[RMDB]
RNA sequence: GGGAACGACUCGAGUAGAGUCGAAAAGCUGAAAAUGAUUUAUGGGUAGUGGAAUAGGUUAACCGUAAGACCUUUGGUUGAAAAACUAUGAAAGUAAGCCUCAGAUAUUUUAUCUUUGGUUACGGGAAAAAUCAUUUACCGUUCGCGGUAAAUGAAAGAAUACAGCUGAGUUCGCUCAGCUGUAUUCAAAAGAAACAACAACAACAAC
Reactivity to 2A3 in 0.01 (KOAc 150mM, MgCl2 10mM, bicine 150mM(pH8.5), 24C), signal-to-noise 1, nucleotides 027 to 156: g010c050u040g030a010a050a030a070u060g040a090u030u120u230a140u140g010g000g000u030a030g050u030g050g120a120a070u090a080g010g000u030u070a070a030c000c000g000u010a030a030g030a010c000c000u050u010u040g010g000u000u010g030a050a070a000a050a000c090u130a100u140g030a010a080a000g030u040a070a000g030c000c000u020c000a000g020a010u030a090u100u220u170u120a030u050c000u010u030u020g000g000u040u020a000c010g010g030g100a000a090a090a120a000u050c000a010u010u000u000a000c000c010g000u020u050c280g030c000g050g000u000a000a000a000u000g000a000a010a000
The record gives the reactivity of an RNA of 207 nucleotides to 2A3. Values cover nucleotides 27 to 156. It was measured as part of the RMDB library M2RFPK.